[RMDB]
RNA sequence: GGGAACGACUCGAGUAGAGUCGAAAACGACAGCUUUUCGAAGCUGUCGAUUGGCAAAGGCUAGGACCGGCCAGACAUAGGUCCGAUAGCAAAUCGUAACGAAGCUCGCCUGCUUCGGCAGGCGAAAAUACAUCCGGACAUUCGUGUCCGGAUGUAUAAAAGAAACAACAACAACAAC
Reactivity to DMS in 0.01 (KOAc 150mM, MgCl2 10mM, bicine 150mM(pH8.5), 24C), signal-to-noise 1, nucleotides 027 to 126: c000g000a010c000a050g000c000u020u010u000u000c160g010a060a040g010c010u000g020u010c010g000a010u010u010g050g040c100a050a110a170g010g010c020u010a040g000g010a030c020c000g000g000c030c010a150g010a130c180a060u020a130g010g010u000c000c010g020a120u000a030g000c080a050a060a060u010c070g010u010a110a070c080g020a060a080g010c130u000c040g010c010c000u010g010c030u000u000c170g010g050c010a020g010g000c000g010a010a000a050